[RMDB]
Structure probing data (DMS and 2A3) for a 177-nucleotide construct. The RNA was probed in 150 mM KOAc, 10 mM MgCl2 and 150 mM bicine (pH 8.5) at 24 C. For 2A3 the reverse transcriptase was SuperScript II with manganese. The 2A3 profile rests on 2,194 reads. For DMS the reverse transcriptase was MarathonRT.

RNA sequence: GGGAACGACUCGAGUAGAGUCGAAAACGGCCUGGCUUCGGCCAGGCCGAAAGAUGCAUUUUACGCCAAGAAAUCCCGGAACAUUGGCCCGCAAGCCUGAGAAAAGAGUACUGUUCGCAGUACUCAAGAAUGUCUCUUAGUUCGCUAAGAGACAUUCAAAAGAAACAACAACAACAAC
Reactivity to DMS in 0.01 (KOAc 150mM, MgCl2 10mM, bicine 150mM(pH8.5), 24C), signal-to-noise 3, nucleotides 027 to 126: c020g020g010c010c000u000g010g000c010u000u010c220g040g010c010c000a020g020g010c020c000g000a000a020a040g010a150u000g010c050a090u010u010u010u000a090c160g020c030c050a040a060g000a130a120a110u000c020c020c000g000g010a070a060c130a150u000u000g010g000c000c070c100g040c070a060a110g010c030c010u000g000a110g000a070a120a100a150g000a010g020u000a000c000u000g000u000u010c170g030c010a010g010u000a000c000u000c000a040a050
Reactivity to 2A3 in 0.01 (KOAc 150mM, MgCl2 10mM, bicine 150mM(pH8.5), 24C), signal-to-noise 2, nucleotides 027 to 126: c010g020g020c000c000u010g010g020c010u070u070c240g030g000c000c000a000g020g020c000c010g000a010a000a000g010a030u080g010c010a010u020u040u070u230a060c050g010c020c010a000a060g030a050a110a030u070c010c020c000g010g050a060a020c030a120u040u100g010g000c020c040c050g050c030a030a010g000c000c020u150g010a110g090a080a110a020a010g000a000g000u010a000c010u000g030u070u090c180g000c080a000g010u030a020c020u000c000a010a000